The record gives the reactivity of an RNA of 207 nucleotides to 2A3. Values cover nucleotides 27 to 156.
[RMDB]
RNA sequence: GGGAACGACUCGAGUAGAGUCGAAAAAGCUCUUGGAAUCAGUCACCUCCAGGAUUACUAAACAUUUUACUACCACUGAUGAUGAUUCACCAAAAACUGCACCAACCGCUUCCACGCAGAAGGUGUCCUUAAAGAAACAACUACGAGCAAGACGACAGGUACAAUUUACUUUCGAGUAAAUUGUACCAAAAGAAACAACAACAACAAC
Reactivity to 2A3 in 0.01 (KOAc 150mM, MgCl2 10mM, bicine 150mM(pH8.5), 24C), signal-to-noise 3, nucleotides 027 to 156: a000g010c010u000c010u020u020g050g030a010a010u020c010a060g070u020c010a020c030c020u020c010c010a010g000g010a060u020u070a050c050u090a040a100a000c030a030u020u050u060u070a040c020u040a040c000c010a020c040u030g020a030u010g000a000u010g010a010u040u070c020a030c070c010a020a010a000a030a070c060u090g010c010a000c000c000a030a020c000c030g040c020u210u020c030c000a070c090g000c000a010g010a060a010g000g010u000g020u050c000c010u070u110a000a030a000g010a010a010a010c020a000a000c000u300a000c010g240a020g000c110a010a090g300a050c060g080a020c110a050